[RMDB]
RNA sequence: GGGAACGACUCGAGUAGAGUCGAAAAUAAAAGAGCGUACGACUCACAAAGACUGUACGACAGUCUGACUCUCUCGUACGCUUGUUGAACGAGAGAGAGAGUGCGUUGGAACAAGUGUGAAAAAAAAACACUUUCCUAGGUUCGCCUAGGAAAGUGUAAAAGAAACAACAACAACAAC
Reactivity to DMS in 0.01 (KOAc 150mM, MgCl2 10mM, bicine 150mM(pH8.5), 24C), signal-to-noise 1, nucleotides 027 to 126: u000a050a050a150a040g010a140g010c040g030u000a020c040g000a030c050u010c000a020c150a180a140a010g000a010c010u000g010u000a100c270g010a130c020a000g020u000c000u000g000a160c060u010c000u000c010u000c000g020u000a040c040g000c020u010u000g010u010u000g010a060a060c050g000a040g010a030g020a000g010a070g040a140g080u000g010c040g010u000u000g030g020a070a090c040a050a070g000u000g000u010g000a000a000a000a000a050a090a050a020